[RMDB]
Structure probing data (DMS) for a 177-nucleotide construct.
RNA sequence: GGGAACGACUCGAGUAGAGUCGAAAAUUAAAGGAGGAGGAGGAGUGUGUGUCUUCCCAGCUGCUGAGUAGAACCUCCGCACACACGCGAAAGCUACGAGCAGCAGCACUGCGGAAACGGUGAAAAAACAAUACUUCCCGUUCGCGGGAAGUAUUGUAAAAGAAACAACAACAACAAC
Reactivity to DMS in 0.01 (KOAc 150mM, MgCl2 10mM, bicine 150mM(pH8.5), 24C), signal-to-noise 2, nucleotides 027 to 126: u000u000a030a090a100g000g010a080g020g000a090g010g020a030g000g000a180g030u000g000u010g010u010g000u000c110u010u020c000c000c000a130g010c000u000g000c010u000g000a190g000u000a030g030a030a130c040c030u000c120c020g030c040a090c150a100c190a110c140g000c030g000a020a260a080g010c030u000a050c010g000a070g010c000a000g000c030a080g000c040a010c070u000g000c040g000g000a010a060a130c080g000g000u000g020a000a080a070a070a070

The RNA was probed in 150 mM KOAc, 10 mM MgCl2 and 150 mM bicine (pH 8.5) at 24 C.